Source information: Source: RMDB library OK2TST, as collected in RNAgym. Chemical mapping of a 177-nucleotide RNA with DMS and 2A3. The DMS profile rests on 2,814 reads.
[RMDB]
RNA sequence: GGGAACGACUCGAGUAGAGUCGAAAAUCUUUGUUCUAUUCAGUACUCGUGUUCGGAUUGAUGGCCGUGAAAUCUUGUAUGGCAUGAAAUUUCCUGGUGUUAUUGGUACGAAGGAAAUGGGGAUGUGAGGAGUCAUAGGAUUCGUCCUAUGACUCCUAAAAGAAACAACAACAACAAC
Reactivity to DMS in 0.01 (KOAc 150mM, MgCl2 10mM, bicine 150mM(pH8.5), 24C), signal-to-noise 2, nucleotides 027 to 126: u010c100u010u010u020g000u000u020c030u000a090u000u000c040a120g030u010a040c040u010c050g020u000g010u000u000c040g000g000a090u000u000g020a100u010g020g000c020c020g020u010g010a060a080a050u000c060u000u010g020u000a110u010g020g010c040a050u010g000a080a090a060u000u000u000c000c020u000g020g020u000g010u000u020a100u000u000g020g030u000a040c050g010a110a040g000g010a030a030a030u000g010g010g000g010a110u000g010u000g010
Reactivity to 2A3 in 0.01 (KOAc 150mM, MgCl2 10mM, bicine 150mM(pH8.5), 24C), signal-to-noise 1, nucleotides 027 to 126: u000c010u080u060u170g040u040u000c010u060a100u100u030c000a010g050u010a030c010u010c060g020u000g060u060u070c040g030g020a090u050u040g050a040u090g030g000c000c000g090u030g060a080a080a070u090c060u090u050g070u130a130u130g050g090c030a040u110g120a040a080a030u010u040u040c010c000u010g020g030u090g070u120u060a090u040u040g020g100u040a000c010g020a060a040g020g010a000a000a050u030g000g000g020g000a010u080g080u110g110